[RMDB]
RNA sequence: GGGAACGACUCGAGUAGAGUCGAAAAAGGAGUAAGACCAUAGCGAUAGGGAGAGAUGCUAGGAGUUAGAGGAGACCGAAGCGAGGAGGAAAGCAAAGAAAGCAACGGGGCUAGCCGUCAGGUGUUCGUUAUAGUAACCGUUCGCGGUUACUAUAACAAAAGAAACAACAACAACAAC
Reactivity to DMS in 0.01 (KOAc 150mM, MgCl2 10mM, bicine 150mM(pH8.5), 24C), signal-to-noise 4, nucleotides 027 to 126: a090g010g000a070g000u010a050a080g000a100c030c020a100u010a090g000c080g010a090u000a090g010g000g000a060g010a070g010a070u010g000c080u000a080g020g000a040g020u000u010a060g000a070g030g000a130g000a060c050c030g010a080a050g000c110g010a070g020g020a080g010g000a060a060a100g000c120a050a060a080g000a090a060a070g000c050a050a080c090g020g010g010g020c090u000a090g000c030c030g010u000c100a050g010g020u000g000u000u000c140
Reactivity to 2A3 in 0.01 (KOAc 150mM, MgCl2 10mM, bicine 150mM(pH8.5), 24C), signal-to-noise 3, nucleotides 027 to 126: a000g070g000a040g020u090a070a000g020a030c030c030a050u060a020g050c030g060a060u100a080g010g030g010a040g000a000g000a010u060g030c020u030a030g000g060a030g010u030u060a040g020a020g070g020a040g020a010c010c030g020a040a000g030c030g020a020g040g010a010g000g030a060a060a000g040c030a090a020a050g080a050a080a000g030c010a010a030c030g040g000g000g000c020u020a020g020c010c020g020u050c020a030g000g060u040g080u080u080c060